[RMDB]
RNA sequence: GGGAACGACUCGAGUAGAGUCGAAAACAUUACGAAUUCAGUCGCAAAUUGUAGAAUAAGCUACUCUACGAUUUAGUGAGCGUUAGUAACGUUGUAAUAUAAUAUAGUCUUUGGAAGGAUUAUAUUGGAGCCGCGGACAAGUUCGCUUGUCCGCGAACCCGAAUCUAUACUUCGGUAUAGAUUCGGGAAAAGAAACAACAACAACAAC
Reactivity to 2A3 in 0.01 (KOAc 150mM, MgCl2 10mM, bicine 150mM(pH8.5), 24C), signal-to-noise 1, nucleotides 027 to 156: c050a060u110u230a020c050g080a120a110u160u110c060a160g080u090c000g020c040a000a000a000u000u000g000u000a020g070a020a070u090a190a110g080c030u090a080c010u000c000u020a000c000g040a030u000u010u130a030g000u000g020a060g050c000g020u040u120a080g050u030a120a050c080g020u030u010g000u030a110a080u060a080u020a170a000u000a000u010a020g000u020c040u090u050u220g090g090a140a080g040g000a000u010u000a000u010a010u000u010g080g000a050g110c130c000g000c000g000g010a000c000a020a000g000u010u080c090g010c200u010u000g000u010c000c010g000c000g000a000a000
This 207-nucleotide RNA was probed chemically with 2A3.
For 2A3, 496 sequencing reads were counted.
The data come from the RNA Mapping Database (RMDB), library M2RFPK.